[RMDB]
RNA sequence: GGGAACGACUCGAGUAGAGUCGAAAAGAUAUGGAUCGCGAAGAACUACACUUUUGACGGUCAGCUAAUCUACACUCGGAAACGAGUGUAGAUGCUGACCGAUAAGUGUAGGGAGCGAUCCUAAGUCGCUCUCUCAGUAGUUCGCUACUGAGAGAGCAAAAGAAACAACAACAACAAC
Reactivity to DMS in 0.01 (KOAc 150mM, MgCl2 10mM, bicine 150mM(pH8.5), 24C), signal-to-noise 1, nucleotides 027 to 126: g010a150u010a300u020g040g000a010u010c000g000c030g010a140a120g030a110a260c030u020a000c000a010c000u000u000u000u010g040a240c200g040g020u010c020a010g020c020u000a060a040u000c000u000a000c000a000c010u000c000g010g000a110a060a240c000g020a000g030u000g050u000a000g000a000u000g000c000u000g000a000c000c000g040a000u000a010a000g000u000g000u020a000g000g000g000a160g000c010g000a010u000c000c010u000a000a050g000u020c050
Reactivity to 2A3 in 0.01 (KOAc 150mM, MgCl2 10mM, bicine 150mM(pH8.5), 24C), signal-to-noise 2, nucleotides 027 to 126: g060a010u160a060u230g010g010a010u000c000g000c040g210a300a060g030a070a050c000u000a010c000a000c000u040u120u150u300g300a150c030g000g000u010c010a000g000c060u150a130a030u000c000u000a000c000a000c000u010c000g050g060a080a120a040c010g000a040g020u000g010u000a000g000a000u000g020c000u000g030a000c000c000g020a000u000a000a000g000u010g000u010a000g010g000g020a010g020c000g000a000u040c000c000u010a020a010g070u020c070